[RMDB]
RNA sequence: GGGAACGACUCGAGUAGAGUCGAAAACCGCAUUCGUGCGGCUUGUGGAUAUGGAUCCUGUCUACCGAGGUAUAGAGGAAGCUCGGAAACGAGCUUCUACCCACCUAUACUCCCCACCGGUACAGGAUCCUAAGUCAAUCUUAUGCUUCGGCAUAAAUAGUAUUAGAGUUUUCGAACUCUAAUACUAAAAAGAAACAACAACAACAAC
Reactivity to DMS in 0.01 (KOAc 150mM, MgCl2 10mM, bicine 150mM(pH8.5), 24C), signal-to-noise 2, nucleotides 027 to 156: c000c010g040c000a100u000u020c300g030u000g020c010g000g010c020u000u020g030u000g010g000a050u000a120u010g010g000a060u000c000c010u020g020u000c080u000a040c000c000g010a160g040g060u000a030u000a030g000a200g020g000a060a040g000c000u000c020g010g000a040a100a070c000g000a020g000c020u000u000c000u010a000c000c010c020a300c100c030u010a010u000a040c020u000c190c070c060c080a300c070c020g040g000u000a020c010a020g050g000a010u000c020c010u020a000a050g000u000c020a130a180u010c080u000u010a020u000g030c000u000u000c240g040g050c050a020u000a010a080a150
Reactivity to 2A3 in 0.01 (KOAc 150mM, MgCl2 10mM, bicine 150mM(pH8.5), 24C), signal-to-noise 2, nucleotides 027 to 156: c000c010g000c010a050u070u090c220g140u040g000c030g010g060c140u300u300g190u240g180g010a000u000a010u070g000g000a000u010c000c010u000g020u070c140u090a010c000c000g000a000g030g000u000a000u000a000g000a010g000g010a000a000g000c000u000c010g000g000a000a010a000c000g000a000g030c000u010u000c000u020a010c000c000c000a020c000c010u010a000u000a010c010u050c050c090c000c010a020c010c000g000g000u000a000c000a010g010g000a000u000c000c000u000a000a000g000u000c000a010a130u060c030u040u030a010u010g010c010u040u090c180g080g030c020a010u100a120a060a050